[RMDB]
RNA sequence: GGGAACGACUCGAGUAGAGUCGAAAACUAUGUACAGACAGUACAGUGGAUAAGGUCUUUAGAUAUCCAACUUUAACAAUGGUACUUGCAGUGGUAUCUAUCAAGAUAGGCAGGCUAUCAUAGAAAGAAGAUGUAUAUUAUUCGUAGUAUGCAUCUUAAAAGAAACAACAACAACAAC
Reactivity to 2A3 in 0.01 (KOAc 150mM, MgCl2 10mM, bicine 150mM(pH8.5), 24C), signal-to-noise 6, nucleotides 027 to 126: c010u030a030u040g010u000a020c020a090g170a020c020a030g030u010a000c000a020g010u020g030g000a030u010a030a040g070g020u030c020u010u010u060a000g000a010u040a010u000c000c000a010a030c010u040u040u010a080a010c030a030a010u020g010g000u010a020c000u000u010g000c010a030g040u070g050g050u040a010u000c010u010a160u070c060a040a010g000a000u010a000g020g000c000a000g020g000c010u010a000u000c000a020u000a020g070a020a100a000g080
Reactivity to DMS in 0.01 (KOAc 150mM, MgCl2 10mM, bicine 150mM(pH8.5), 24C), signal-to-noise 9, nucleotides 027 to 126: c020u010a050u010g010u000a010c010a150g020a130c230a140g000u000a010c010a040g010u010g000g000a040u010a040a080g010g000u010c060u010u010u020a050g000a090u010a010u000c010c010a080a250c070u010u010u010a080a100c170a080a030u010g000g010u000a030c020u000u000g010c020a120g010u030g020g020u010a010u000c010u000a080u050c240a060a040g000a020u000a020g010g010c020a020g000g000c210u000a010u000c010a020u000a070g000a070a070a060g000